Structure probing data (2A3) for a 207-nucleotide construct.
2A3 adducts were read by reverse transcription with SuperScript II with manganese.
Reactivities are rounded to 0.1 and cut off at 0 and 3.
2A3 is a SHAPE reagent: it acylates the 2'-hydroxyl of flexible nucleotides of all four kinds.
Values cover nucleotides 27 to 156.

[RMDB]
RNA sequence: GGGAACGACUCGAGUAGAGUCGAAAAGCCAUAGUGUUGGUUAGCCGUAGCCAUAACCAACCACAACCGGUACGCACACAUUAACGCCAGCACUGAUACGUGCGCAUUGCGGCAUUGUGUAUAGCUGAUCAGUUAGUGUGCUGUGCGGCUAUGCGCGCCCCGUCAUCUCAUUCGUGAGAUGACGGGGAAAAGAAACAACAACAACAAC
Reactivity to 2A3 in 0.01 (KOAc 150mM, MgCl2 10mM, bicine 150mM(pH8.5), 24C), signal-to-noise 2, nucleotides 027 to 156: g060c000c000a040u080a060g080u080g020u010u040g060g000u040u060a020g000c030c070g030u060a010g030c020c050a070u070a120a010c000c020a000a010c030c010a090c040a120a090c010c060g030g060u130a040c040g030c010a020c000a000c000a040u010u170a070a020c020g040c050c020a020g000c000a030c120u090g030a120u110a150c060g040u000g000c040g050c220a180u100u300g010c010g100g000c000a020u140u160g010u030g000u010a000u060a060g050c010u040g020a100u050c010a060g030u020u000a040g010u000g060u070g070c050u020g020u020g010c010g020g010c000u000a000u000g140c220g020c000g010